An RNA of 177 nucleotides, treated with 2A3 and DMS and read out base by base. Reactivities are rounded to 0.1 and cut off at 0 and 3. Values cover nucleotides 27 to 126. DMS adducts were read by reverse transcription with MarathonRT.
RNA sequence: GGGAACGACUCGAGUAGAGUCGAAAAGUAAAUAAAGCGCACCAAUAUGGAGGUGCGCAACCAGCGUGACCUAGGAACACGCAUCCACGCGUCUCCAAAGACGCGAAAGGUAUUCCAAAUAAAAAAAACACACCUAAUGAUUCGUCAUUAGGUGUGUAAAAGAAACAACAACAACAAC
Reactivity to 2A3 in 0.01 (KOAc 150mM, MgCl2 10mM, bicine 150mM(pH8.5), 24C), signal-to-noise 2, nucleotides 027 to 126: g020u030a000a080a170u130a070a160a010g010c000g000c000a010c010c000a040a060u230a180u290g180g000a120g040g000u000g000c000g030c010a000a000c020c010a020g000c000g010u010g020a070c020c130u120a130g060g060a130a000c000a000c000g010c030a030u040c000c010a000c010g000c010g000u010c030u030c060c040a060a290a060g010a010c000g030c020g030a040a000a000g000g000u030a050u030u030c000c030a040a110a030u250a040a040a020a000a000a000a070
Reactivity to DMS in 0.01 (KOAc 150mM, MgCl2 10mM, bicine 150mM(pH8.5), 24C), signal-to-noise 2, nucleotides 027 to 126: g000u050a050a070a060u000a050a110a140g020c000g000c000a010c000c000a130a160u010a140u000g010g010a160g000g010u010g000c000g000c010a020a010c110c090a080g010c030g000u010g040a090c120c100u000a180g000g000a080a110c010a000c020g000c010a080u020c030c050a140c010g010c000g010u000c010u000c150c200a070a090a050g000a040c000g030c000g000a010a010a100g040g010u010a080u000u000c040c020a050a100a080u100a030a010a000a040a080a110a050